[RMDB]
The record gives the reactivity of an RNA of 207 nucleotides to DMS and 2A3. For 2A3 the reverse transcriptase was SuperScript II with manganese.
RNA sequence: GGGAACGACUCGAGUAGAGUCGAAAAAGCAUGCCAGUAAAUGCAUAGCCACACCUGGUCAUGAGUGCCGUGAUGGCAAAGCCAGAAGCUGCCAGGGAUUAAUGGAGGGACCCGUGUAUGAGACACAGGGGUGCAUUAAGGAAGGCCUUGCUGAGGCCACUUAGAGCGUAUUCGUACGCUCUAAGUGAAAAGAAACAACAACAACAAC
Reactivity to DMS in 0.01 (KOAc 150mM, MgCl2 10mM, bicine 150mM(pH8.5), 24C), signal-to-noise 3, nucleotides 027 to 156: a080g010c020a070u000g020c000c020a270g010u000a080a060a050u010g010c020a070u000a140g020c020c040a050c040a100c040c010u010g010g020u000c050a130u000g020a160g020u000g010c020c010g010u010g000a190u000g000g000c010a060a050a070g030c020c020a260g010a110a290g020c010u000g010c020c020a060g000g020g020a170u000u000a060a090u000g000g010a110g020g000g030a120c020c010c010g030u000g030u000a110u010g020a240g010a110c010a040c020a090g010g010g020g000u000g000c030a050u000u010a080a150g010g030a130a140g010g000c020c040u000u010g010c040u000g000a120g010g010c050
Reactivity to 2A3 in 0.01 (KOAc 150mM, MgCl2 10mM, bicine 150mM(pH8.5), 24C), signal-to-noise 4, nucleotides 027 to 156: a000g060c030a020u060g040c030c050a060g100u290a040a090a070u060g000c020a040u050a040g050c030c010a050c010a020c030c020u020g000g050u100c070a130u160g090a040g110u080g030c000c040g070u150g120a160u200g020g000c010a020a050a010g010c010c010a060g050a120a020g050c030u040g000c020c010a010g010g020g020a040u040u140a060a050u100g050g010a070g050g070g030a030c000c030c050g000u000g010u000a150u130g150a120g040a030c010a000c040a070g000g000g000g010u030g020c000a020u070u060a100a050g090g000a060a060g030g000c010c030u070u070g010c020u050g010a040g040g030c020